[RMDB]
RNA sequence: GGGAACGACUCGAGUAGAGUCGAAAAGAUAUGGAUCUCGGUGUGGAGUGGUGGUCGGAAACGACCAUACCACGUUGAAACACCGGAUCCUAAGUCAAAGCUGAAUGGGGUUCGCCCCAUUCAGCAACAGAGUAACGUUCUUCGGAACGUUACUCUGAAAAGAAACAACAACAACAAC
Reactivity to DMS in 0.01 (KOAc 150mM, MgCl2 10mM, bicine 150mM(pH8.5), 24C), signal-to-noise 3, nucleotides 027 to 126: g020a030u000a250u000g000g010a010u000c000u020c020g030g010u000g030u000g000g000a100g040u000g020g020u000g000g000u010c000g010g000a040a090a120c000g010a000c000c000a080u010a050c050c000a000c020g030u010u020g010a270a300a010c000a010c000c020g000g000a010u010c000c000u000a000a090g000u000c020a060a160a170g010c000u000g000a010a000u000g000g010g000g010u000u010c290g010c010c010c000c000a000u000u000c000a010g000c000a030a060
Reactivity to 2A3 in 0.01 (KOAc 150mM, MgCl2 10mM, bicine 150mM(pH8.5), 24C), signal-to-noise 2, nucleotides 027 to 126: g020a010u040a010u080g020g030a020u020c240u130c260g010g010u010g010u030g050g200a150g000u010g040g000u000g000g030u000c010g010g030a000a060a040c020g000a000c000c010a000u040a020c000c000a000c010g060u150u200g030a100a030a000c010a010c020c000g010g000a000u000c000c000u000a020a000g000u010c050a140a070a050g010c000u000g010a000a030u000g020g000g040g030u090u100c270g170c000c000c000c000a000u000u000c000a000g000c000a000a000